The data come from the RNA Mapping Database (RMDB), library OK1LIB. Structure probing data (DMS and 2A3) for a 177-nucleotide construct.
RNA sequence: GGGAACGACUCGAGUAGAGUCGAAAAGGGGACGGUAACCAGGGUGGUAAACUCGUACUCAGCUGCUUCAGACUCAGUACCAGUCAACUUGGACAGUAAUGUAGAUUUCCCCACCGACGGGAACCCGCAUCGUGAGCGAUUUCGAUCGCUCACGAUGAAAAGAAACAACAACAACAAC
Reactivity to DMS in 0.01 (KOAc 150mM, MgCl2 10mM, bicine 150mM(pH8.5), 24C), signal-to-noise 2, nucleotides 027 to 126: g000g000g000g020a150c070g000g020u030a120a300c040c010a140g010g000g080u020g000g010u040a090a200a030c100u020c300g010u010a000c010u000c190a040g000c080u050g020c140u000u020c050a110g030a030c000u000c120a010g000u030a000c000c040a030g020u010c120a020a030c140u000u000g020g030a060c010a020g000u000a010a040u000g020u000a020g000a200u000u000u000c000c050c010c030a300c080c000g100a190c280g010g020g000a070a130c060c050c010g000
Reactivity to 2A3 in 0.01 (KOAc 150mM, MgCl2 10mM, bicine 150mM(pH8.5), 24C), signal-to-noise 2, nucleotides 027 to 126: g000g000g010g030a060c090g020g040u080a080a060c000c010a030g070g000g000u000g000g130u090a150a000a000c030u000c020g010u040a010c000u000c010a000g000c040u100g000c020u130u140c070a020g020a230c000u000c010a000g050u070a060c040c060a010g030u030c010a040a090c030u040u060g020g010a030c000a020g050u190a160a100u210g000u050a030g010a120u010u000u020c000c060c050c000a020c000c080g050a060c110g030g020g000a000a050c000c000c010g010
For DMS, 1,479 sequencing reads were counted. The reactions ran in a buffer of 150 mM KOAc, 10 mM MgCl2 and 150 mM bicine (pH 8.5), at 24 C. For DMS the reverse transcriptase was MarathonRT. The 2A3 profile rests on 1,182 reads.